[RMDB]
RNA sequence: GGGAACGACUCGAGUAGAGUCGAAAAGAUAUGGACGUUGUGAGGGAGGUACAUUCGGAAACGAAUGAAUACCGAAGAACUCAUGACGUCCUAAGUCAAAACACCUAGUUGUUCGCAACUAGGUGAACGUGACUGUACAGUUCGCUGUACAGUCACGAAAAGAAACAACAACAACAAC
Reactivity to 2A3 in 0.01 (KOAc 150mM, MgCl2 10mM, bicine 150mM(pH8.5), 24C), signal-to-noise 1, nucleotides 027 to 126: g000a000u030a010u080g000g010a000c010g000u000u010g030u020g030a010g000g230g050a100g040g000u000a000c020a010u020u030c000g010g000a050a020a000c010g000a000a010u070g010a130a150u030a020c000c020g050a120a060g120a030a040c010u000c000a010u000g000a010c010g000u000c000c000u000a000a000g000u000c000a000a000a030a160c000a000c020c010u000a010g000u010u060g070u080u100c300g000c150a000a010c010u010a000g070g010u000g000a000a000
Reactivity to DMS in 0.01 (KOAc 150mM, MgCl2 10mM, bicine 150mM(pH8.5), 24C), signal-to-noise 2, nucleotides 027 to 126: g000a010u000a180u040g000g000a000c000g030u020u000g030u000g000a000g030g000g010a300g020g000u000a040c000a000u040u000c000g030g030a030a040a070c000g000a010a000u000g000a160a210u000a000c000c000g030a080a170g000a100a080c000u000c000a000u000g000a000c000g030u000c000c010u000a000a060g000u020c000a110a120a120a260c040a000c000c000u000a010g000u000u010g000u020u010c300g020c000a020a010c000u000a020g010g030u000g000a010a030
The record gives the reactivity of an RNA of 177 nucleotides to 2A3 and DMS. It was measured as part of the RMDB library TTRDES. Reactivities are given for positions 27 through 126. The RNA was probed in 150 mM KOAc, 10 mM MgCl2 and 150 mM bicine (pH 8.5) at 24 C. The DMS profile rests on 1,476 reads. DMS (dimethyl sulfate) methylates the pairing face of unpaired adenines and cytosines.